[RMDB]
RNA sequence: GGGAACGACUCGAGUAGAGUCGAAAACAGAUGAUGUUCGCAUCAUCUGAAAUAAAAGCCAUGCAGCAAGGAAGGAGCAUGGCAACCAACCAACCAAAAUAAAAAUCUGUUCCUUCGGGAACAGAAAGCUUAAAGUAUCCUUCGGGAUACUUUAAGCAAAAGAAACAACAACAACAAC
Reactivity to 2A3 in 0.01 (KOAc 150mM, MgCl2 10mM, bicine 150mM(pH8.5), 24C), signal-to-noise 4, nucleotides 027 to 126: c000a000g020a000u010g000a000u010g020u070u110c210g030c080a010u000c000a000u000c000u000g020a010a020a000u080a010a040a010a010g000c000c000a000u000g010c020a100g040c030a100a170g140g110a130a070g040g040a080g010c000a000u010g000g000c000a000a020c030c020a000a020c010c020a000a030c020c020a060a080a110a030u280a070a130a070a030a060u030c000u000g000u000u000c010c000u000u020c220g080g000g000a010a000c000a000g010a010a020a000
Reactivity to DMS in 0.01 (KOAc 150mM, MgCl2 10mM, bicine 150mM(pH8.5), 24C), signal-to-noise 1, nucleotides 027 to 126: c010a000g000a000u000g000a010u000g000u000u030c220g030c010a050u000c000a010u020c000u010g000a030a070a050u000a040a050a140a190g030c000c000a000u000g000c050a160g000c080a110a170g050g000a140a170g000g000a070g010c000a010u000g050g000c000a010a030c070c070a150a160c090c120a040a060c090c110a110a060a090a100u030a060a020a170a070a170u000c000u000g000u000u010c000c000u000u040c170g040g000g000a000a000c000a030g000a000a050a050